[RMDB]
RNA sequence: GGGAACGACUCGAGUAGAGUCGAAAAGCAGUUGACUUCGGUCAACUGCAAAUAAAGCUCAAGACGUGGACAGGGAGGAACGUCUUGAGCAACCCAAUAAAAAAACAUGUAAGUUCGCUUACAUGAAGGUGGAGUGAACGUUCGCGUUCACUCCACCAAAAGAAACAACAACAACAAC
Reactivity to 2A3 in 0.01 (KOAc 150mM, MgCl2 10mM, bicine 150mM(pH8.5), 24C), signal-to-noise 1, nucleotides 027 to 126: g010c030a010g000u000u030g020a000c010u030u090c190g040g000u000c000a000a000c000u000g000c000a000a000a010u020a000a000a000g000c000u000c000a000a000g000a000c040g020u030g060g190a110c120a180g100g040g060a080g050g020a020a000c000g000u000c000u010u000g000a000g000c000a000a000c000c010c040a010a040u190a050a050a020a000a000a010a020c020a000u000g000u010a000a020g010u040u110c200g030c090u000u020a000c000a020u000g020a010a020
The record gives the reactivity of an RNA of 177 nucleotides to 2A3. The reactions ran in a buffer of 150 mM KOAc, 10 mM MgCl2 and 150 mM bicine (pH 8.5), at 24 C. 2A3 adducts were read by reverse transcription with SuperScript II with manganese. As a SHAPE reagent, 2A3 marks flexible, mostly unpaired nucleotides at the ribose 2'-OH.